RNA sequence: GGGAACGACUCGAGUAGAGUCGAAAAGAAUGUGGAGCCGUCUCGACCUCGUCCUUACCUUUUUUGGCGGCUUUUUAUACAUAUUUCGAUAUGUAUGCUGGACGACAACGAGGCCAGCACAAUUAGAGGGUUGGCUUUAGUUCGCUGAAGCCAACCCAAAAGAAACAACAACAACAAC
Reactivity to DMS in 0.01 (KOAc 150mM, MgCl2 10mM, bicine 150mM(pH8.5), 24C), signal-to-noise 2, nucleotides 027 to 126: g070a070a030u050g010u000g000g000a010g020c020c070g000u040c010u000c230g040a050c140c130u020c010g000u030c040c040u060u010a210c080c080u000u000u000u110u000u020g000g000c020g000g000c020u000u010u020u050u100a000u010a010c010a000u000a030u000u010u000c090g000a040u000a000u020g000u000a000u000g050c050u000g040g000a090c030g000a080c190a100a090c100g000a110g020g000c000c010a100g000c020a030c130a010a050u000u010a070g000a290
Reactivity to 2A3 in 0.01 (KOAc 150mM, MgCl2 10mM, bicine 150mM(pH8.5), 24C), signal-to-noise 2, nucleotides 027 to 126: g080a000a050u240g000u100g130g060a000g070c000c000g030u010c000u040c140g060a070c000c020u060c050g010u070c020c040u080u030a080c000c030u060u080u020u010u070u210g010g010c020g000g020c040u050u010u000u000u040a030u000a000c000a000u020a000u000u050u070c120g050a000u000a000u010g030u000a000u000g000c000u020g000g000a000c020g040a060c080a070a040c010g080a050g000g020c000c000a000g080c030a000c010a040a050u120u040a000g090a050
Source information: Structure probing data (DMS and 2A3) for a 177-nucleotide construct. It was measured as part of the RMDB library OK1LIB. The RNA was probed in 150 mM KOAc, 10 mM MgCl2 and 150 mM bicine (pH 8.5) at 24 C. Values are in units of 0.01, from 0 to 300, in steps of 10.